[RMDB]
RNA sequence: GGGAACGACUCGAGUAGAGUCGAAAAGAGAAAUCAUCGUGUUAGUCGAAGUGGUCUGGAACGGCCUGUCGUAGAGGGUGAGAGUCCCGUAGACGAAAACAUGGUGACUGUCGUGACGGACACCCGAGUGGGGAUAUUAAUUCGUUAAUAUCCCCACAAAAGAAACAACAACAACAAC
Reactivity to 2A3 in 0.01 (KOAc 150mM, MgCl2 10mM, bicine 150mM(pH8.5), 24C), signal-to-noise 7, nucleotides 027 to 126: g110a000g020a010a070a030u010c000a000u010c010g020u010g010u020u030a060g000u010c010g000a010a010g030u060g090g000u020c010u020g020g000a010a010c020g010g000c000c010u010g010u000c010g000u010a010g010a010g080g000g000u020g000a010g000a000g010u010c000c000c000g000u000a010g000a000c000g010a030a080a000a000c000a010u020g020g000u010g010a020c020u030g040u040c030g050u090g100a050c050g050g010a010c010a040c030c010c010g010a020
Reactivity to DMS in 0.01 (KOAc 150mM, MgCl2 10mM, bicine 150mM(pH8.5), 24C), signal-to-noise 9, nucleotides 027 to 126: g000a130g010a080a140a190u000c000a010u000c010g030u000g010u000u000a290g000u000c000g000a020a040g000u040g010g010u000c000u010g000g060a300a040c010g010g000c000c000u000g000u010c010g030u010a010g010a250g000g000g000u000g010a130g000a090g010u000c000c000c000g000u000a300g000a010c000g000a100a100a060a010c010a010u000g010g010u000g000a020c070u010g000u000c010g010u010g000a100c240g000g000a050c070a100c010c000c010g010a130